[RMDB]
An RNA of 177 nucleotides, treated with 2A3 and DMS and read out base by base.
RNA sequence: GGGAACGACUCGAGUAGAGUCGAAAACCGACUAGGAUCCAUGUCUAGAGUACAUCGCUGGUACAUACGAUCGGUACUAGUGAUACUGAUCGCUAGAGCCAUGUGAUCCUAGCGAUCGGAUCACAUGUAAGCUCGCUCUAUUCGUAGAGCGAGCUUAAAAAGAAACAACAACAACAAC
Reactivity to 2A3 in 0.01 (KOAc 150mM, MgCl2 10mM, bicine 150mM(pH8.5), 24C), signal-to-noise 1, nucleotides 027 to 126: c000c000g020a040c000u010a000g040g050a020u020c000c000a000u030g030u000c020u040a000g020a000g090u010a050c020a020u030c060g030c100u060g040g060u000a000c020a070u190a070c090g180a130u040c150g000g050u000a010c030u070a030g010u020g000a010u000a040c060u080g050a050u070c060g010c060u020a010g020a030g120c100c010a020u030g080u160g000a000u090c040c000u000a000g000c020g040a000u040c000g000g010a050u080c070a030c010a080u120g110
Reactivity to DMS in 0.01 (KOAc 150mM, MgCl2 10mM, bicine 150mM(pH8.5), 24C), signal-to-noise 2, nucleotides 027 to 126: c020c030g000a210c020u000a040g000g000a020u000c030c010a030u010g010u000c010u010a040g000a170g020u000a060c190a050u000c080g020c040u000g000g020u000a010c030a090u020a060c160g000a050u000c120g050g010u000a000c010u000a050g020u000g000a120u000a010c080u000g020a050u000c050g000c010u020a030g000a040g000c220c010a010u020g010u030g030a010u000c000c000u000a010g000c120g000a070u020c040g010g020a230u040c070a050c080a060u010g010
Annotation
The 2A3 profile rests on 1,113 reads. It was measured as part of the RMDB library OK2TRN. The DMS profile rests on 1,249 reads. 2A3 adducts were read by reverse transcription with SuperScript II with manganese.